[RMDB]
RNA sequence: GGGAACGACUCGAGUAGAGUCGAAAAAGUUCUGGAGGCUGGGAAGUCCAGGAUCAAGAUACUGGCAGAUCCAAUGUCUGGUUGAGGGCCUGCUUCCUAGUUUGCAGAUUACCUUCUCAUUUUAUUGGAUUAUCACAAAGUGGAAAGAGAGUGAGAAACGUAAUAAAUUAUUCGUAAUUUAUUACGUAAAAGAAACAACAACAACAAC
Reactivity to DMS in 0.01 (KOAc 150mM, MgCl2 10mM, bicine 150mM(pH8.5), 24C), signal-to-noise 3, nucleotides 027 to 156: a090g010u000u000c010u010g000g000a030g020g010c020u000g020g020g000a040a060g020u010c050c090a030g040g030a050u000c020a120a150g010a300u000a010c010u000g010g000c040a200g010a150u000c110c110a050a090u000g010u000c020u010g010g020u000u010g010a210g030g010g010c020c020u000g000c020u000u000c010c030u000a060g030u010u000u000g010c000a050g010a050u000u000a080c040c030u000u000c020u020c020a110u010u000u000u000a060u000u020g000g010a210u000u000a120u000c060a050c050a050a070a110g030u000g020g000a100a050a070g010a110g010a150g010u010g010a060g000a140a100
Reactivity to 2A3 in 0.01 (KOAc 150mM, MgCl2 10mM, bicine 150mM(pH8.5), 24C), signal-to-noise 7, nucleotides 027 to 156: a000g020u020u000c010u010g060g090a000g000g000c000u000g000g000g010a010a010g020u040c140c050a010g020g010a070u050c010a030a050g030a130u110a090c010u030g020g000c010a020g030a220u130c090c050a070a130u020g020u020c070u100g080g000u010u020g010a030g010g040g010c000c000u000g000c000u010u000c000c000u000a010g000u000u010u020g050c000a000g000a010u020u090a050c010c000u010u010c010u000c010a040u030u080u060u170a140u070u050g100g030a070u090u100a080u270c030a030c050a130a190a060g080u070g050g050a050a110a010g060a010g010a020g020u020g010a020g000a040a090